[RMDB]
RNA sequence: GGGAACGACUCGAGUAGAGUCGAAAAGAUAUGGACGCUGUUGUCAGCCUACGAGCAACCGAAGAACAGUCUCGGAAACGAGACUGGGAGGUUGCGAGUAGGCUUGGAUUUACAGCGUCCUAAGUCAGACAAUGAUAUGGUUCGCCAUAUCAUUGUCAAAAGAAACAACAACAACAAC
Reactivity to DMS in 0.01 (KOAc 150mM, MgCl2 10mM, bicine 150mM(pH8.5), 24C), signal-to-noise 4, nucleotides 027 to 126: g020a030u010a300u010g010g000a020c010g020c000u010g000u000u000g010u000c000a070g000c000c000u000a010c010g000a300g000c010a010a010c010c020g000a120a170g000a180a230c000a010g010u000c010u000c000g010g010a080a090a210c000g000a020g000a020c000u000g010g000g000a070g000g000u000u000g000c010g010a180g010u000a010g010g000c010u010u010g020g000a010u000u010u000a020c000a030g010c000g010u000c000c000u000a010a050g000u000c060a140
Reactivity to 2A3 in 0.01 (KOAc 150mM, MgCl2 10mM, bicine 150mM(pH8.5), 24C), signal-to-noise 2, nucleotides 027 to 126: g050a030u080a070u190g000g020a000c000g010c000u010g010u030u010g010u000c000a000g000c000c010u010a010c010g000a010g030c000a000a000c000c010g280a300a070g020a070a050c000a000g000u010c000u010c020g040g010a070a080a050c010g000a000g030a010c010u000g000g000g000a020g040g000u000u000g010c010g010a010g000u000a000g000g000c000u000u010g010g000a000u150u090u150a000c010a000g000c010g000u000c000c000u010a010a000g000u000c010a010